Source information:
Source: RMDB library VIROID, as collected in RNAgym. The record gives the reactivity of an RNA of 177 nucleotides to 2A3 and DMS. Reactivities are given for positions 27 through 126. DMS adducts were read by reverse transcription with MarathonRT.
RNA sequence: GGGAACGACUCGAGUAGAGUCGAAAACAUGGUCCCAGCCUCCUCGCUGGCGCCGGCUGGGCAACAUUCCGAGGGGGACCGUCCCUCGGUAAUGGCGAAUGGGACCCAGAAAUCUCUCUAGAUUCCCCGAGUACUUAAUGUUCGCAUUAAGUACUCGAAAAGAAACAACAACAACAAC
Reactivity to 2A3 in 0.01 (KOAc 150mM, MgCl2 10mM, bicine 150mM(pH8.5), 24C), signal-to-noise 2, nucleotides 027 to 126: c020a040u130g040g000u080c000c000c000a020g060c000c020u050c020c010u080c070g050c030u040g070g040c050g080c080c010g070g040c040u080g030g030g030c000a030a010c000a020u030u000c000c000g000a020g020g000g000g000g070a030c020c060g240u110c000c000c000u010c000g000g000u020a010a020u020g020g000c050g080a090a060u090g010g010g030a040c000c010c010a010g080a030a100a030u010c040u010c020u010c020u090a100g000a280u010u000c010c020c000
Reactivity to DMS in 0.01 (KOAc 150mM, MgCl2 10mM, bicine 150mM(pH8.5), 24C), signal-to-noise 3, nucleotides 027 to 126: c100a090u010g020g020u010c090c010c000a060g010c020c040u000c100c050u000c200g010c030u000g010g010c170g010c060c060g000g000c030u010g000g000g010c060a090a080c030a060u010u000c010c020g000a010g000g020g010g000g010a130c170c140g000u000c000c000c000u000c020g020g010u000a010a010u000g010g010c110g000a100a110u000g000g000g010a110c010c010c060a070g000a080a090a060u010c050u000c080u000c060u020a080g000a260u000u000c010c010c020